[RMDB]
The data come from the RNA Mapping Database (RMDB), library OK2TRN. This 177-nucleotide RNA was probed chemically with 2A3 and DMS. The RNA was probed in 150 mM KOAc, 10 mM MgCl2 and 150 mM bicine (pH 8.5) at 24 C.

RNA sequence: GGGAACGACUCGAGUAGAGUCGAAAAAGAUGAGAACGGCAACGAGAGUGAUGGCGAUGAUGAGGGGGGAUUCCAGAGGCUGAAGAGGCGCCCUCAAGCCAGAUUGCCUUCAAAACCUCCAGAGCAGCCUAGCGAUUACAUUCGUGUAAUCGCUAGGAAAAGAAACAACAACAACAAC
Reactivity to 2A3 in 0.01 (KOAc 150mM, MgCl2 10mM, bicine 150mM(pH8.5), 24C), signal-to-noise 1, nucleotides 027 to 126: a000g080a040u110g050a030g030a080a010c110g030g010c030a020a030c070g040a010g000a010g210u110g070a090u070g050g000c160g100a120u030g020a080u120g000a070g000g000g030g000g000g080a050u080u040c020c040a040g060a050g260g000c030u020g050a030a010g070a020g070g000c020g140c000c020c010u030c060a030a010g000c030c000a000g010a020u000u050g010c000c000u000u000c030a040a060a070a070c000c010u030c030c050a100g020a060g170c040a000g030
Reactivity to DMS in 0.01 (KOAc 150mM, MgCl2 10mM, bicine 150mM(pH8.5), 24C), signal-to-noise 2, nucleotides 027 to 126: a100g020a100u010g000a300g010a050a050c170g010g020c010a030a040c100g000a130g010a130g020u000g000a100u010g000g010c020g020a070u000g000a080u000g010a080g000g010g010g000g020g010a160u000u000c060c090a140g010a090g000g000c020u010g000a080a140g010a170g010g000c050g020c040c000c000u000c050a010a160g010c030c020a060g010a180u000u000g010c000c000u000u000c040a030a060a090a060c050c030u000c000c050a150g000a180g010c060a120g000

The DMS profile rests on 1,309 reads. For 2A3, 1,069 sequencing reads were counted.